[RMDB]
RNA sequence: GGGAACGACUCGAGUAGAGUCGAAAAUGGCCAGGAAAGUUUAGCUAGGUCUGCAUGUGUUUAUUAUUCUCAAGUCUUGUGUAAAUCAAUUCUUUUGGUUGACUCAAGUUUGGUUACUUCUGUUGGUGCAACCGGCUGUUCGCAGCCGGUAAAAGAAACAACAACAACAAC
Reactivity to DMS in 0.01 (KOAc 150mM, MgCl2 10mM, bicine 150mM(pH8.5), 24C), signal-to-noise 3, nucleotides 027 to 129: u020g000g030c050c020a120g050g000a070a110a100g020u020u060u070a090g030c000u070a100g030g020u010c020u050g000c080a080u060g010u000g020u000u000u000a080u010u090a160u000u020c050u000c060a000a000g010u050c100u050u040g000u000g000u020a050a070a010u000c040a040a070u020u070c200u060u020u050u000g020g050u020u020g010a050c090u020c010a030a070g040u050u020u000g000g030u080u000a050c040u050u030c030u020g030u030u050g020g070u000g010c060a070
Reactivity to 2A3 in 0.01 (KOAc 150mM, MgCl2 10mM, bicine 150mM(pH8.5), 24C), signal-to-noise 2, nucleotides 027 to 129: u020g000g000c000c000a000g000g130a050a000a080g050u050u030u120a080g000c020u060a000g000g010u020c040u000g020c070a170u050g010u040g000u100u110u000a070u030u100a180u230u020c050u020c070a000a180g180u020c000u000u150g000u040g050u140a050a020a000u010c000a000a030u180u140c080u150u270u000u060g000g130u050u070g110a050c000u010c000a030a060g070u000u160u000g000g000u060u000a060c040u080u000c030u000g040u030u010g030g000u040g000c000a000